[RMDB]
RNA sequence: GGGAACGACUCGAGUAGAGUCGAAAAGAAAGAAAGAAGAAUCACCAGGAGGCAAGGAUCCUCAACUACGUUAUUCGGGCACCUUGAGUUGAGAGGAGCUAGUGGUGCGCCCGGCCUGGAGAUCAUAACACGACAGGCGGGUUCGCCCGCCUGUCAAGAUAGGUGAGUACUUCGGUACUCACCUAUCAAAAGAAACAACAACAACAAC
Reactivity to 2A3 in 0.01 (KOAc 150mM, MgCl2 10mM, bicine 150mM(pH8.5), 24C), signal-to-noise 2, nucleotides 027 to 156: g080a020a120a010g040a040a080a010g080a050a010g000a040a020u020c010a000c020c000a000g040g000a060g000g020c030a020a190g020g000a010u010c000c000u010c010a000a020c000u280a080c050g130u230u140a070u140u130c010g030g060g000c040a020c010c050u150u300g020a000g020u010u000g030a030g000a010g000g010a020g000c010u030a010g030u060g100g040u020g000c010g020c010c000c000g020g000c000c000u000g010g010a020g010a000u020c010a020u030a120a050c060a020c180g000a000c000a000g000g000c030g040g000g010u030u010c140g080c000c000c000g040c000c000u010g000u000c000a000a000